[RMDB]
RNA sequence: GGGAACGACUCGAGUAGAGUCGAAAACUGGCUGGGACCCAGCGUGCCUCCCCCGACCCCAGCAGGUCCGUGCAGCCAUGGCCUGCCUGAAUUGCACUGUAGGCUCGGCCCCUGCCAGCAGCCGAGCCCUAUUGGCCUGCUUCGGCAGGCCAAUAGGAAAAGAAACAACAACAACAAC
Reactivity to DMS in 0.01 (KOAc 150mM, MgCl2 10mM, bicine 150mM(pH8.5), 24C), signal-to-noise 2, nucleotides 027 to 126: c050u010g000g010c010u010g000g000g020a190c110c010c040a080g020c070g020u000g020c030c020u000c030c000c000c000c000g000a230c010c010c020c040a120g020c060a070g010g000u030c020c100g020u010g000c060a060g020c090c050a130u000g000g010c010c010u000g010c010c080u010g000a070a070u000u000g000c050a060c080u000g000u000a060g000g010c010u000c080g000g000c000c030c050c050u010g000c030c020a050g000c120a140g000c010c000g010a040g000c030